[RMDB]
RNA sequence: GGGAACGACUCGAGUAGAGUCGAAAAUUAAAUGGGAGCGCGUUAAGACAACGCUUCGUGACGGCGACGAAGAAAUGGAUACCGAAGAGCACCCAGAGUACGCUGGACACGUGUUCAUGUCAGUGUCUGGCUCUAUUUCAUUCGUGAAAUAGAGCCAAAAAGAAACAACAACAACAAC
Reactivity to 2A3 in 0.01 (KOAc 150mM, MgCl2 10mM, bicine 150mM(pH8.5), 24C), signal-to-noise 2, nucleotides 027 to 126: u050u020a020a020a060u070g030g010g010a030g000c040g000c030g060u030u050a160a070g110a050c020a050a010c010g000c000u010u020c020g020u000g020a040c000g010g040c070g030a020c030g010a010a030g050a030a130a020u120g030g000a020u030a140c000c030g020a060a030g020a020g080c010a000c010c000c000a000g030a050g020u080a040c070g020c050u000g050g030a010c020a000c030g140u110g060u110u060c110a110u100g110u070c020a010g070u060g000u070c020
Reactivity to DMS in 0.01 (KOAc 150mM, MgCl2 10mM, bicine 150mM(pH8.5), 24C), signal-to-noise 3, nucleotides 027 to 126: u010u020a020a060a120u020g000g020g000a040g020c030g030c050g000u010u000a100a130g030a110c150a060a070c130g010c010u010u010c020g030u010g020a090c040g000g000c080g000a070c020g000a060a020g010a020a090a090u010g000g000a090u000a090c090c020g010a080a090g000a130g010c020a080c020c010c020a050g010a130g020u000a070c120g000c010u010g030g010a030c030a060c080g010u010g010u000u010c110a110u000g020u000c050a060g010u000g010u010c070